This 207-nucleotide RNA was probed chemically with 2A3 and DMS.
Values cover nucleotides 27 to 156.
It was measured as part of the RMDB library OK3TST.
The RNA was probed in 150 mM KOAc, 10 mM MgCl2 and 150 mM bicine (pH 8.5) at 24 C.

RNA sequence: GGGAACGACUCGAGUAGAGUCGAAAAGGAAAAGAGUGUCUCCUGUUGGUUUAAAUAUUCAUUGGCCAAAAGUCUUAUCGGCCACGUGACCCCAACACAGCACUAUUUAGGAAUUCUUGGUUCGAUAGAACGUGGAAGACGGAGAUCCACCCGGGAGCGUACUACCAGUGUUCGCACUGGUAGUACGAAAAGAAACAACAACAACAAC
Reactivity to 2A3 in 0.01 (KOAc 150mM, MgCl2 10mM, bicine 150mM(pH8.5), 24C), signal-to-noise 3, nucleotides 027 to 156: g050g020a100a000a010a050g080a020g020u020g040u020c010u000c020c040u030g010u020u030g060g000u090u170u270a140a120a040u280a090u100u070c020a010u020u020g000g000c000c010a000a160a070a040g050u030c040u120u120a140u260c070g000g000c000c010a010c040g010u010g050a060c010c040c010c010a020a010c030a000c010a030g010c000a000c020u080a110u090u100u070a030g000g030a060a030u050u020c020u010u060g080g000u040u040c010g010a030u070a160g060a080a010c060g010u050g020g020a020a050g040a010c060g000g050a030g000a050u020c000c000a060c000c030c000g020g020g000a080g040
Reactivity to DMS in 0.01 (KOAc 150mM, MgCl2 10mM, bicine 150mM(pH8.5), 24C), signal-to-noise 2, nucleotides 027 to 156: g040g010a090a100a100a110g010a120g020u010g000u000c010u000c080c040u000g000u000u010g020g000u000u000u000a030a060a110u000a130u000u020c030a070u000u010g000g000c000c000a030a090a090a170g000u000c170u030u000a110u000c100g030g050c020c010a020c120g030u010g000a060c300c120c020c010a030a050c050a110c120a070g000c010a050c030u000a090u010u000u000a090g020g000a100a090u000u000c040u010u000g010g010u020u000c060g010a230u010a080g020a030a050c030g000u000g020g000a020a040g000a140c050g020g000a080g020a070u010c000c020a120c010c020c000g020g020g000a130g000